[RMDB]
RNA sequence: GGGAACGACUCGAGUAGAGUCGAAAAGCUCCUUCAGGUGAACGAUCUCGGUUGUUUCUCUGAAGGCAUGAUCACCCCGUCCGAUGCGGAAGUUCGGGCUUCCGUCGAACGCGAAAGUCGGACGGCGAAAACGAGUUACCGUUCGCGGUAACUCGAAUGUUAGAUUAUACUUCGGUAUAAUCUAACAAAAAGAAACAACAACAACAAC
Reactivity to DMS in 0.01 (KOAc 150mM, MgCl2 10mM, bicine 150mM(pH8.5), 24C), signal-to-noise 3, nucleotides 027 to 156: g010c060u000c000c010u000u000c020a040g000g030u000g000a040a030c010g000a040u000c050u040c220g050g010u000u000g000u000u000u010c030u000c000u010g000a070a030g010g040c090a030u000g010a120u000c060a090c020c020c000c010g010u000c000c010g010a040u000g020c030g020g020a060a050g020u000u000c150g030g020g020c020u000u010c010c020g030u000c060g010a090a100c120g020c070g000a090a110a140g030u000c000g020g010a040c000g000g020c040g000a080a060a090a220c030g010a040g020u000u000a020c020c000g040u000u010c280g020c030g010g020u000a000a010c000u010c000g000a010a040
Reactivity to 2A3 in 0.01 (KOAc 150mM, MgCl2 10mM, bicine 150mM(pH8.5), 24C), signal-to-noise 6, nucleotides 027 to 156: g040c030u020c010c000u000u010c000a050g060g020u100g060a010a010c010g010a030u020c050u070c230g160g010u000u010g000u010u110u010c020u000c000u000g000a000a000g000g000c000a100u130g050a040u080c050a180c020c010c000c000g000u000c000c000g000a010u030g020c000g020g010a020a000g010u110u260c160g090g170g040c010u020u000c010c000g000u020c010g070a160a050c090g010c040g150a120a030a000g020u000c000g000g000a000c000g000g000c030g060a070a080a010a040c010g000a000g000u000u000a000c010c000g010u040u070c240g010c000g070g000u010a000a000c000u000c000g000a010a010
An RNA of 207 nucleotides, treated with DMS and 2A3 and read out base by base. High DMS reactivity at an A or C suggests that its Watson-Crick edge is free. 2A3 adducts were read by reverse transcription with SuperScript II with manganese. Values cover nucleotides 27 to 156. The DMS profile rests on 8,821 reads.